[RMDB]
RNA sequence: GGGAACGACUCGAGUAGAGUCGAAAAGAUAUGGAUCGAUGAUUGGGAGAUCCCGCUCGGAAACGAGCGCGGCCCGAUCAUCGAUCAAUAUCGAUCCUAAGUCAAAACUGCUUGUUCGCAAGCAGAAUCAGAUCUCAGUGUUCGCACUGAGAUCUGAAAAAGAAACAACAACAACAAC
Reactivity to DMS in 0.01 (KOAc 150mM, MgCl2 10mM, bicine 150mM(pH8.5), 24C), signal-to-noise 2, nucleotides 027 to 126: g010a020u010a000u010g000g010a030u000c000g000a020u010g010a000u020u010g020g010g010a290g000a260u010c030c020c000g030c010u000c000g010g000a130a070a220c000g010a010g000c000g030c250g040g000c020c000c000g010a000u000c000a000u030c000g010a010u000c000a060a000u000a000u000c000g000a200u000c000c000u000a090a110g010u010c200a050a130a120a260c000u000g000c010u000u000g000u000u020c300g030c010a000a000g010c000a000g010a080a090
Reactivity to 2A3 in 0.01 (KOAc 150mM, MgCl2 10mM, bicine 150mM(pH8.5), 24C), signal-to-noise 1, nucleotides 027 to 126: g020a010u010a010u020g100g000a000u000c000g000a000u020g010a020u010u000g030g000g050a170g000a150u210c000c010c030g020c000u030c020g070g050a130a070a090c020g000a000g010c030g090c170g000g060c010c000c000g000a000u000c000a010u000c000g000a000u010c010a000a000u000a000u020c010g030a000u000c010c010u060a130a050g250u060c240a060a050a240a210c010u030g000c040u090u040g090u150u150c300g000c150a000a000g000c010a020g040a010a150